[RMDB]
RNA sequence: GGGAACGACUCGAGUAGAGUCGAAAACGCUCUUGCGCCGAAGAUGAACGGGGCUAAGCGGUCUGCCGAAGCUGUGGGAUGUAAAAAAACAUCGGUAGGGGAGCGUUCCGUGUUAGGGAGAAACGCGUGCGUGAGCCGCGUUGGACGAAGCGGAAGCCUUCAAAGUCUUCUUCGGAAGACUUUGAAGAAAAGAAACAACAACAACAAC
Reactivity to DMS in 0.01 (KOAc 150mM, MgCl2 10mM, bicine 150mM(pH8.5), 24C), signal-to-noise 1, nucleotides 027 to 156: c010g060c000u010c030u000u050g030c030g010c060c000g010a060a170g000a280u030g000a130a140c050g010g060g030g020c040u000a060a090g000c000g030g030u010c020u000g000c020c040g010a110a130g000c070u010g010u040g000g000g100a110u010g000u000a000a000a030a090a020a080a090c010a180u000c000g030g120u010a070g000g000g020g010a080g000c010g000u000u000c010c020g000u000g020u000u000a000g010g010g000a250g000a160a010a010c000g030c000g020u000g000c010g010u000g000a280g050c030c000g000c000g050u000u000g010g000a120c000g000a060a190g010c000g000g000a030a060g020c140
Reactivity to 2A3 in 0.01 (KOAc 150mM, MgCl2 10mM, bicine 150mM(pH8.5), 24C), signal-to-noise 2, nucleotides 027 to 156: c010g050c020u020c020u040u120g080c010g060c040c010g070a050a080g110a180u190g040a080a020c050g010g010g010g030c020u020a100a030g010c000g020g040u020c050u060g030c020c010g040a050a010g020c080u060g030u120g190g060g030a050u070g070u300a000a030a000a080a000a000a100c030a030u020c020g020g000u050a100g010g010g010g020a010g000c040g010u010u010c000c000g040u050g040u080u060a080g020g010g000a090g060a120a030a000c010g020c010g060u220g020c000g000u130g080a040g000c000c020g030c000g020u020u000g000g000a000c000g020a020a000g000c010g010g020a000a010g060c000

Chemical mapping of a 207-nucleotide RNA with DMS and 2A3.
For DMS the reverse transcriptase was MarathonRT.
It was measured as part of the RMDB library PDB130.
The reactions ran in a buffer of 150 mM KOAc, 10 mM MgCl2 and 150 mM bicine (pH 8.5), at 24 C.
The 2A3 profile rests on 1,312 reads.